[RMDB]
The record gives the reactivity of an RNA of 177 nucleotides to 2A3.
The RNA was probed in 150 mM KOAc, 10 mM MgCl2 and 150 mM bicine (pH 8.5) at 24 C.
RNA sequence: GGGAACGACUCGAGUAGAGUCGAAAAAAAUUUGGGCAGAUAUAAACAGCGAUUCGUUAAAAUAUGUCAGUUAAAAUUAAUAAUUGCAUUAUUUCUUAACAAAAAGACAUCCUAGCUUUACCAUGUUGCUAUUACGUACAUUCGUGUACGUAAUAGCAAAAGAAACAACAACAACAAC
Reactivity to 2A3 in 0.01 (KOAc 150mM, MgCl2 10mM, bicine 150mM(pH8.5), 24C), signal-to-noise 2, nucleotides 027 to 126: a000a000a000u030u040u020g010g000g000c010a010g060a010u010a020u000a020a150a010c010a010g000c000g030a070u010u040c040g000u030u050a100a040a010a010u170a010u040g100u070c010a050g010u050u090a040a040a100a190u020u160a040a030u020a080a000u080u080g000c000a000u000u000a000u010u060u010c000u090u010a020a030c030a080a040a050a000a000g050a000c050a050u030c000c000u020a000g000c050u090u090u020a080c040c030a070u180g020u010u010